Source: RMDB library TTRDEL, as collected in RNAgym. Chemical mapping of a 177-nucleotide RNA with DMS and 2A3. The RNA was probed in 150 mM KOAc, 10 mM MgCl2 and 150 mM bicine (pH 8.5) at 24 C.
RNA sequence: GGGAACGACUCGAGUAGAGUCGAAAAGAUAUGGAGCAUCUGGGUUAACUUUGAUCUCGGAAACGAGGGAGUUAGACCAGAGUGCUCCUAAGUCAAAGUAACUAACUCGUUCGCGAGUUAGUUACAACAUAGUAUGGUCGUUCGCGACCAUACUAUGAAAAGAAACAACAACAACAAC
Reactivity to DMS in 0.01 (KOAc 150mM, MgCl2 10mM, bicine 150mM(pH8.5), 24C), signal-to-noise 5, nucleotides 027 to 126: g000a040u000a300u010g000g010a000g000c000a040u000c010u000g000g000g000u000u000a010a020c000u000u000u000g000a110u010c000u010c000g000g000a110a100a200c010g010a020g010g000g000a020g020u000u000a010g000a020c000c000a020g000a050g010u000g020c000u000c000c000u000a010a050g000u010c030a100a100a140g010u010a000a000c000u000a000a010c000u000c000g020u000u010c220g020c020g010a020g010u000u000a000g010u000u000a000c010a100a150
Reactivity to 2A3 in 0.01 (KOAc 150mM, MgCl2 10mM, bicine 150mM(pH8.5), 24C), signal-to-noise 2, nucleotides 027 to 126: g040a000u070a030u180g000g000a000g000c000a010u000c010u000g060g000g000u040u020a000a010c030u140u210u180g190a140u190c000u010c020g020g020a080a090a050c020g000a010g000g030g000a010g000u020u010a010g010a010c000c000a000g020a010g010u020g000c000u000c000c000u000a070a000g010u020c060a120a010a120g000u000a000a000c000u000a000a000c000u000c000g030u060u030c170g020c010g200a000g000u000u010a000g000u000u000a000c000a000a000